The record gives the reactivity of an RNA of 177 nucleotides to DMS and 2A3. It was measured as part of the RMDB library TTRDES. The 2A3 profile rests on 5,361 reads. For DMS the reverse transcriptase was MarathonRT. The reactions ran in a buffer of 150 mM KOAc, 10 mM MgCl2 and 150 mM bicine (pH 8.5), at 24 C. 2A3 adducts were read by reverse transcription with SuperScript II with manganese.
RNA sequence: GGGAACGACUCGAGUAGAGUCGAAAAGAUAUGGAUGAUGCACUCAGCGAAGACAGUGGGUCGGAAACGACCCAUCGAGCUGGUGUUUCAUCCUAAGUCAAAACAUACUUCGUUCGCGAAGUAUGAAUCAUUACCUCCACUUCGGUGGAGGUAAUGAAAAAGAAACAACAACAACAAC
Reactivity to DMS in 0.01 (KOAc 150mM, MgCl2 10mM, bicine 150mM(pH8.5), 24C), signal-to-noise 4, nucleotides 027 to 126: g000a030u000a300u010g000g000a000u010g000a020u000g000c020a010c000u010c300a020g010c010g000a090a120g010a030c300a080g000u010g000g020g020u000c010g000g000a070a080a090c000g000a010c030c000c000a000u000c000g000a050g020c030u000g020g010u000g020u000u000u000c010a030u000c010c000u000a000a100g000u000c030a060a080a170a180c000a020u000a000c000u010u000c020g030u000u030c200g020c010g010a010a000g010u000a000u020g000a130a130
Reactivity to 2A3 in 0.01 (KOAc 150mM, MgCl2 10mM, bicine 150mM(pH8.5), 24C), signal-to-noise 2, nucleotides 027 to 126: g040a040u060a030u110g000g000a000u010g000a000u020g020c010a020c040u300c110a120g000c040g080a190a020g070a030c030a040g070u100g010g010g000u000c000g010g010a060a050a010c000g030a000c000c010c000a000u010c000g010a000g000c020u040g110g000u010g000u020u000u000c000a000u000c000c000u000a050a010g020u000c030a000a000a090a130c010a010u020a000c000u000u010c000g070u050u090c230g020c020g190a020a000g000u010a000u000g010a030a110